[RMDB]
RNA sequence: GGGAACGACUCGAGUAGAGUCGAAAAGAACUGGGAACACACGACCGCAAAUCUGACGCGUCGCGCAGGUGUCACAGACACUUUCGGCCUCUUUCGCCGUGCGCGACUUGGGAUUGCGGACGUGUAAGAUGUUAUAAAAAUUCGUUUUUAUAACAUCAAAAGAAACAACAACAACAAC
Reactivity to 2A3 in 0.01 (KOAc 150mM, MgCl2 10mM, bicine 150mM(pH8.5), 24C), signal-to-noise 9, nucleotides 027 to 126: g060a050a030c100u110g020g040g120a110a010c020a000c000a000c080g040a040c000c000g000c020a040a130a210u000c000u010g020a020c100g050c100g190u000c000g000c000g000c000a020g050g020u010g000u010c060a130c070a300g020a010c000a000c000u090u150u120c030g000g010c010c030u220c110u110u230u180c070g000c000c000g010u010g000c000g000c000g000a000c000u000u080g000g000g000a000u000u000g000c000g000g000a000c000g000u000g000u000a000a010
Reactivity to DMS in 0.01 (KOAc 150mM, MgCl2 10mM, bicine 150mM(pH8.5), 24C), signal-to-noise 9, nucleotides 027 to 126: g010a160a140c060u010g000g000g010a150a090c160a060c000a010c010g000a090c000c000g000c010a010a040a070u000c010u000g000a220c020g010c230g000u000c000g000c010g010c010a050g010g020u000g000u000c010a140c240a150g000a020c010a010c010u000u020u010c030g000g000c000c210u010c230u010u010u020c300g010c000c010g010u000g000c010g000c000g000a000c000u000u030g000g010g000a020u000u000g000c000g000g010a020c000g020u000g000u000a020a070
Structure probing data (2A3 and DMS) for a 177-nucleotide construct.
The data come from the RNA Mapping Database (RMDB), libraries RFM100 and RFMREP.
For 2A3 the reverse transcriptase was SuperScript II with manganese.
The RNA was probed in 150 mM KOAc, 10 mM MgCl2 and 150 mM bicine (pH 8.5) at 24 C.